[RMDB]
RNA sequence: GGGAACGACUCGAGUAGAGUCGAAAAGGCCGUGGCCGGCCAGGAAGGUGGUGACGUCCUCGACCACAUAUUCCUCGACCACAUCCGCGAUGUCCUUGGACAGCACCAGCUCGAACCCGGCGGAGCCCUGGUACUCGGGGUUCGCCCCGAGUACCAGAAAAGAAACAACAACAACAAC
Reactivity to DMS in 0.01 (KOAc 150mM, MgCl2 10mM, bicine 150mM(pH8.5), 24C), signal-to-noise 2, nucleotides 027 to 126: g010g000c060c030g060u030g010g040c040c040g000g000c050c090a070g000g000a060a070g000g020u000g000g030u010g010a100c070g010u000c040c010u020c060g010a130c010c100a040c080a120u060a160u010u020c000c000u020c110g000a110c060c010a100c100a090u030c030c050g040c120g010a130u010g010u000c040c020u000u030g020g000a070c060a100g010c000a040c040c020a040g000c020u010c030g000a080a240c130c000c000g000g000c060g020g030a130g000c040c040
Reactivity to 2A3 in 0.01 (KOAc 150mM, MgCl2 10mM, bicine 150mM(pH8.5), 24C), signal-to-noise 4, nucleotides 027 to 126: g010g000c020c030g040u060g120g020c030c020g020g020c010c000a010g070g060a060a020g090g060u040g010g020u030g040a060c050g060u070c020c040u030c040g040a040c020c020a040c010a030u150a120u060u050c010c010u050c050g040a070c020c020a020c010a070u050c040c030g010c030g060a070u070g100u080c000c010u040u090g050g030a030c020a030g030c010a020c010c030a010g050c020u000c020g070a090a110c020c000c000g000g000c020g020g030a050g000c000c000